Chemical mapping of a 177-nucleotide RNA with 2A3. It was measured as part of the RMDB library RFM100. Reactivities are rounded to 0.1 and cut off at 0 and 3.
[RMDB]
RNA sequence: GGGAACGACUCGAGUAGAGUCGAAAAUAUCUGAUCAGCACAUGUGUGACAGUGUUGAUCACAAGUCAUUGCCAGCUCUGUUCAUUUUCUUCCCUGGUCUAACUCAAUAAUUGCCAUCAUGAAAAUUAUUGGUCAAGCAUUUCGAUGCUUGACCAAUAAAAGAAACAACAACAACAAC
Reactivity to 2A3 in 0.01 (KOAc 150mM, MgCl2 10mM, bicine 150mM(pH8.5), 24C), signal-to-noise 2, nucleotides 027 to 126: u160a030u010c010u020g010a000u030c000a000g040c000a140c170a200u060g060u010g060u100g090a060c030a100g000u000g000u060u000g000a030u000c000a000c000a000a040g020u000c000a140u000u160g000c010c020a020g000c020u000c010u120g060u140u030c020a090u030u110u160u000c020u020u070c000c000c000u010g000g000u020c050u030a040a070c020u010c060a030a030u090a200a050u120u040g030c010c000a060u050c030a050u170g140a020a040a040a040u040u010